[RMDB]
Annotation: This 207-nucleotide RNA was probed chemically with 2A3. It was measured as part of the RMDB library RNAMAK. The 2A3 profile rests on 699 reads. Conditions: 150 mM KOAc, 10 mM MgCl2 and 150 mM bicine (pH 8.5), 24 C.
RNA sequence: GGGAACGACUCGAGUAGAGUCGAAAAGCUUAGUUCGCUAAGCAGCGCGAUAUGGACGCUGGUGGCACGACAUGCCUCCAGGCUCGGAAACGAGCCUGAGAGGCAACAGCGUGCGUAACAUCCAGCGUCCUAAGUCUAAUAUACCUUUCGAGGUAAACACAUUCAUGGGGUUCGCCCCAUGAAUGUGAAAAGAAACAACAACAACAAC
Reactivity to 2A3 in 0.01 (KOAc 150mM, MgCl2 10mM, bicine 150mM(pH8.5), 24C), signal-to-noise 1, nucleotides 027 to 156: g000c000u000u000a010g000u170u090c300g040c150u020a000a000g000c000a010g090c070g020c060g080a020u000a030u290g020g000a010c000g000c000u000g000g020u000g000g000c000a020c010g050a070c110a060u300g000c000c010u020c030c000a000g020g000c000u010c000g030g000a080a070a070c050g000a000g000c000c000u020g000a110g000a000g040g000c000a000a000c000a010g020c000g000u000g020c000g000u000a010a010c040a160u040c010c000a000g000c000g000u000c000c000u000a000a000g000u000c000u020a080a100u240a020u080a200c050c000u130u100u140c180g140a080g060g020u080a070a110a000